[RMDB]
This 177-nucleotide RNA was probed chemically with 2A3. The reactions ran in a buffer of 150 mM KOAc, 10 mM MgCl2 and 150 mM bicine (pH 8.5), at 24 C. The data come from the RNA Mapping Database (RMDB), library OK1LIB. Values cover nucleotides 27 to 126. For 2A3, 845 sequencing reads were counted.
RNA sequence: GGGAACGACUCGAGUAGAGUCGAAAAGUACUAAAAUAUCACAAUUUUUUAAAGAUAGAAACCAACCUGGCUUACACCGGUUUGAACUCAGAUCAUGUAAGAAUUUAAAAGUCGAACAGACUUAAAAGUUGAGUUACUCUUUCGAGAGUAACUCAACAAAAGAAACAACAACAACAAC
Reactivity to 2A3 in 0.01 (KOAc 150mM, MgCl2 10mM, bicine 150mM(pH8.5), 24C), signal-to-noise 2, nucleotides 027 to 126: g110u130a090c070u080a000a110a260a210u140a030u050c020a000c020a120a130u110u000u000u010u300u300a300a220a000g030a020u040a020g160a180a070a000c020c000a000a050c090c030u130g090g000c050u030u000a010c000a000c030c010g020g060u030u000u070g070a030a070c050u000c100a000g020a100u020c020a000u000g020u020a020a000g000a020a010u050u230u270a110a230a010a000g000u000c020g010a110a010c030a090g000a000c000u000u020a030a050a030a050